[RMDB]
RNA sequence: GGGAACGACUCGAGUAGAGUCGAAAAGGGGUCCAAUCUCAGCCGAUCCAAAACCUAUGGUCAUGUGGAAAGACCUUCUCACAGGGUCCUGGAAAGGACCCGAUGUCCUAAUAACAGCCGGACGAGGCUAUGCUUGUGUUUUUCCACAGGAUGCCGACUACCUCUACAGUUUCGACUGUAGAGGUAGAAAAGAAACAACAACAACAAC
Reactivity to DMS in 0.01 (KOAc 150mM, MgCl2 10mM, bicine 150mM(pH8.5), 24C), signal-to-noise 2, nucleotides 027 to 156: g030g000g070g000u010c000c040a040a100u010c090u010c060a110g020c070c030g000a140u000c000c060a070a060a100a070c030c050u010a110u000g010g040u000c030a060u010g020u010g010g020a070a040a060g010a070c010c040u000u010c030u020c040a080c090a180g000g030g000u000c000c020u010g050g050a120a210a050g020g040a020c010c000c020g000a020u000g000u000c060c070u020a080a070u010a080a060c020a090g000c030c020g040g030a200c130g010a110g020g020c030u000a030u010g030c060u010u010g010u010g010u000u000u000u000u000c010c000a040c030a030g040g000a100u010g020c040c000g000a180
Reactivity to 2A3 in 0.01 (KOAc 150mM, MgCl2 10mM, bicine 150mM(pH8.5), 24C), signal-to-noise 3, nucleotides 027 to 156: g000g000g010g000u020c030c000a060a050u030c050u010c020a030g030c040c050g090a070u100c040c030a030a050a090a170c060c040u140a180u200g020g000u080c110a040u020g000u010g000g000a000a020a010g000a000c000c000u050u010c090u020c010a110c050a030g020g000g010u000c000c000u030g100g090a130a150a040g010g000a000c000c000c000g000a000u020g000u010c000c010u060a130a080u130a140a100c060a030g080c070c060g060g010a100c050g060a160g060g000c080u110a090u160g130c070u090u080g050u020g030u160u000u010u030u030c000c000a010c010a000g020g000a030u100g030c010c000g040a010